The record gives the reactivity of an RNA of 207 nucleotides to 2A3. The reactions ran in a buffer of 150 mM KOAc, 10 mM MgCl2 and 150 mM bicine (pH 8.5), at 24 C.
RNA sequence: GGGAACGACUCGAGUAGAGUCGAAAACUCAUGGUCAAUGAAGCUCCUAACGUAACGCUGUUUAAAUCUGGCCCUGACACUAUGAUGCAAGUUAAUAUCAGAGGGGUCAACACAGUGAACCUUAACUCUGCUUUCAGCAAUCUACAAAAUUUAUGGGCAACAGCCAACCUUUCGAGGUUGGCUGUUGAAAAGAAACAACAACAACAAC
Reactivity to 2A3 in 0.01 (KOAc 150mM, MgCl2 10mM, bicine 150mM(pH8.5), 24C), signal-to-noise 2, nucleotides 027 to 156: c020u020c010a020u080g060g000u110c040a140a050u060g090a080a040g020c000u050c010c040u040a210a000c120g010u090a150a040c060g010c000u020g050u040u070u140a080a090a080u140c110u050g010g010c010c000c010u080g070a070c000a050c210u060a150u240g010a000u050g070c050a000a100g030u300u210a170a050u150a090u140c010a050g010a080g040g010g000g000u000c010a000a000c060a010c000a050g000u000g020a020a020c000c000u070u030a080a000c050u080c030u040g050c030u020u080u080c060a010g030c010a020a000u000c040u100a070c110a020a170a050a030u140u280u010a020u050g000g000g050